Notes
The data come from the RNA Mapping Database (RMDB), library OK3TST. Structure probing data (2A3 and DMS) for a 207-nucleotide construct. Values cover nucleotides 27 to 156. DMS (dimethyl sulfate) methylates the pairing face of unpaired adenines and cytosines. The reactions ran in a buffer of 150 mM KOAc, 10 mM MgCl2 and 150 mM bicine (pH 8.5), at 24 C. For 2A3 the reverse transcriptase was SuperScript II with manganese. For DMS the reverse transcriptase was MarathonRT. Values are in units of 0.01, from 0 to 300, in steps of 10.
[RMDB]
RNA sequence: GGGAACGACUCGAGUAGAGUCGAAAAGGCUGCCACCAAUAAAUGCGCGAUGACCGUCAGUUGACGCAAUGCGACCAUCAGUCAUGAAGCAGAUUCCAUUCAGGCAGUAACGAACAUCAUUGCGCGCCUGAAAUAUUAAUGCUGAUUCAAGUAAUAACAAACGAGAUACAUUCGUGUAUCUCGUUUGAAAAGAAACAACAACAACAAC
Reactivity to 2A3 in 0.01 (KOAc 150mM, MgCl2 10mM, bicine 150mM(pH8.5), 24C), signal-to-noise 5, nucleotides 027 to 156: g050g020c040u040g000c030c020a050c040c030a040a040u140a130a110a060u160g020c040g000c050g070a070u030g030a080c070c010g040u050c030a070g020u080u160g060a020c020g000c040a020a090u120g010c010g050a060c010c020a020u060c020a010g070u050c000a040u080g040a030a010g000c020a010g000a080u100u060c030c010a010u030u010c020a000g000g000c010a020g000u030a030a010c050g050a110a050c000a110u170c020a030u050u110g010c020g000c010g000c010c000u000g010a030a020a000u160a020u080u150a090a040u090g040c020u030g020a100u120u050c080a110a050g060u120a090a120u190a130a050
Reactivity to DMS in 0.01 (KOAc 150mM, MgCl2 10mM, bicine 150mM(pH8.5), 24C), signal-to-noise 3, nucleotides 027 to 156: g030g010c010u000g000c040c040a150c030c050a120a160u000a050a110a170u010g000c070g000c030g040a080u000g010a080c020c020g000u000c060a130g010u000u000g010a110c060g020c050a130a080u020g010c050g020a090c030c030a090u000c060a110g010u000c030a090u000g010a140a060g020c030a050g010a200u000u010c060c040a300u000u000c020a020g010g050c020a150g030u000a020a040c030g010a100a120c150a090u000c050a110u000u000g000c000g000c090g030c030c000u000g000a020a010a120u010a070u000u000a060a120u010g010c000u000g010a140u000u010c050a040a080g020u000a080a060u000a040a270